This 177-nucleotide RNA was probed chemically with 2A3.
For 2A3 the reverse transcriptase was SuperScript II with manganese.
For 2A3, 435 sequencing reads were counted.
Values cover nucleotides 27 to 126.

[RMDB]
RNA sequence: GGGAACGACUCGAGUAGAGUCGAAAAGAUUUGUCAUUUCCACUUUCACAGUUACACUUACAUUUGCUAUUUAAACGCAUGACGCGAUUUUCAAUACAAUUCUCAUUGGCUGUAGUUAAUGAAAGUACGGAAUGGAACCGUUCGCGGUUCCAUUCCGAAAAGAAACAACAACAACAAC
Reactivity to 2A3 in 0.01 (KOAc 150mM, MgCl2 10mM, bicine 150mM(pH8.5), 24C), signal-to-noise 1, nucleotides 027 to 126: g020a020u280u300u260g240u260c220a030u000u080u000c020c040a070c000u000u000u000c000a020c000a030g030u010u020a020c050a000c020u170u100a030c110a140u030u000u080g000c000u020a030u050u140u020a000a000a000c000g000c000a080u030g220a080c060g020c000g070a080u000u010u010u000c090a000a000u010a170c030a020a020u030u030c030u020c100a010u010u010g050g000c050u050g000u080a070g000u040u090a000a020u110g030a010a030a000g000u010a030